[RMDB]
RNA sequence: GGGAACGACUCGAGUAGAGUCGAAAACAUAAACGCUUCGGCGUUUAUGAAAUAAAAUCACCGGUAAGCUCGCGUAAAAUAUUACCGCUGAACGCGAGCUUAAAACGGGACAGUUCGCUGUCCCGAACGUAAUCAAAAACUUCGGUUUUUGAUUACGAAAAGAAACAACAACAACAAC
Reactivity to 2A3 in 0.01 (KOAc 150mM, MgCl2 10mM, bicine 150mM(pH8.5), 24C), signal-to-noise 2, nucleotides 027 to 126: c000a000u000a000a000a000c000g020c020u050u040c230g130g000c000g000u010u000u000a000u010g000a020a000a000u030a010a080a000a080u120c130a050c140c010g030g100u030a020a000g000c010u010c000g000c010g000u020a000a080a140a050u190a110u200u160a050c030c010g070c120u040g050a010a000c010g020c000g000a010g000c000u010u000a000a000a000a000c020g000g020g010a000c000a000g030u080u110c160g020c150u020g000u000c000c000c000g000a000a020
Reactivity to DMS in 0.01 (KOAc 150mM, MgCl2 10mM, bicine 150mM(pH8.5), 24C), signal-to-noise 2, nucleotides 027 to 126: c010a010u000a000a000a000c000g010c000u000u020c170g000g010c000g010u000u000u000a000u000g000a050a100a050u000a060a040a120a120u000c080a090c050c020g020g000u000a030a010g010c000u000c000g020c000g000u000a010a080a100a160u010a070u000u000a110c100c060g020c060u000g000a150a020c010g010c000g000a020g000c000u000u000a010a050a090a160c020g020g000g010a020c020a010g000u000u010c220g030c010u000g010u000c000c000c000g010a010a060
An RNA of 177 nucleotides, treated with 2A3 and DMS and read out base by base. The RNA was probed in 150 mM KOAc, 10 mM MgCl2 and 150 mM bicine (pH 8.5) at 24 C. 2A3 adducts were read by reverse transcription with SuperScript II with manganese. DMS adducts were read by reverse transcription with MarathonRT. Source: RMDB library M2PK50, as collected in RNAgym. The DMS profile rests on 2,300 reads.